[RMDB]
RNA sequence: GGGAACGACUCGAGUAGAGUCGAAAAUUCGCGAGCGCGUUCAUCGCCGCGAGGCCGCCUUCGCCCUGCGCGUCAGGCGCGACGUUCGCGUUGCGCAGCAACUGCUUGGUGAGCGCGUCGGCCACGAACUCCCCGUGCAGUUCGCUGCACGGGGAGUAAAAGAAACAACAACAACAAC
Reactivity to DMS in 0.01 (KOAc 150mM, MgCl2 10mM, bicine 150mM(pH8.5), 24C), signal-to-noise 1, nucleotides 027 to 126: u010u000c030g050c010g040a220g000c000g000c040g030u010u000c080a150u000c030g000c050c020g010c040g000a050g000g000c020c010g000c060c080u020u000c100g040c020c030c070u000g000c040g020c110g040u000c150a120g010g000c020g020c060g000a070c030g000u000u000c220g040c010g020u030u000g000c070g000c010a040g010c100a080a050c120u000g000c030u000u020g020g000u000g000a040g000c210g010c140g000u000c050g010g000c050c000a040c060g000a040
Reactivity to 2A3 in 0.01 (KOAc 150mM, MgCl2 10mM, bicine 150mM(pH8.5), 24C), signal-to-noise 1, nucleotides 027 to 126: u140u050c020g000c020g050a120g100c040g020c010g020u110u100c040a070u040c010g000c010c020g000c000g000a000g020g000c000c000g000c030c010u000u000c000g000c000c000c000u170g020c060g000c010g160u100c070a080g030g000c000g000c030g040a070c010g020u040u130c140g000c010g020u000u060g060c000g010c030a010g010c020a040a140c030u060g030c020u100u140g010g010u080g000a040g050c060g000c040g040u070c020g000g000c000c000a030c000g050a060
An RNA of 177 nucleotides, treated with DMS and 2A3 and read out base by base. The reactions ran in a buffer of 150 mM KOAc, 10 mM MgCl2 and 150 mM bicine (pH 8.5), at 24 C. The DMS profile rests on 1,162 reads. The 2A3 profile rests on 1,276 reads. High 2A3 reactivity points to a flexible backbone, as in loops and unpaired stretches.